[RMDB]
This 177-nucleotide RNA was probed chemically with 2A3 and DMS. The data come from the RNA Mapping Database (RMDB), library OK2TST. DMS adducts were read by reverse transcription with MarathonRT. 2A3 adducts were read by reverse transcription with SuperScript II with manganese. The reactions ran in a buffer of 150 mM KOAc, 10 mM MgCl2 and 150 mM bicine (pH 8.5), at 24 C.
RNA sequence: GGGAACGACUCGAGUAGAGUCGAAAACGUCCGGCAAUUCCGUCGGCUUUGAGUGUGGCCCUGCUGGUAUGCACACCGGGGCUGGCUACCGCCGAUCCACAGACGGACACCAUCGCCGCGCUGAUUGCGAACUCACACUUUUCGAAGUGUGAGUUCGAAAAGAAACAACAACAACAAC
Reactivity to 2A3 in 0.01 (KOAc 150mM, MgCl2 10mM, bicine 150mM(pH8.5), 24C), signal-to-noise 2, nucleotides 027 to 126: c030g030u000c000c020g000g000c040a030a080u140u050c060c040g010u030c010g010g060c080u090u070u090g160a100g010u170g000u120g060g000c000c020c000u020g000c070u040g030g040u180a140u300g100c100a050c000a000c110c010g000g000g020g000c000u030g070g000c010u050a040c020c050g010c000c000g050a020u000c000c060a060c020a080g040a010c010g020g010a010c000a020c020c010a050u090c000g000c000c010g050c000g000c030u040g060a100u070u150g050
Reactivity to DMS in 0.01 (KOAc 150mM, MgCl2 10mM, bicine 150mM(pH8.5), 24C), signal-to-noise 2, nucleotides 027 to 126: c190g000u000c030c000g010g010c020a090a090u030u000c140c070g000u000c000g020g000c010u000u010u020g030a090g020u000g000u000g020g000c010c020c010u010g030c280u020g010g000u000a120u010g040c200a130c100a050c070c030g010g010g020g000c030u010g020g050c060u000a060c110c200g000c010c010g000a060u000c090c020a130c140a110g010a100c020g000g000a060c050a120c050c050a110u000c040g030c020c020g020c070g000c040u000g000a110u000u000g010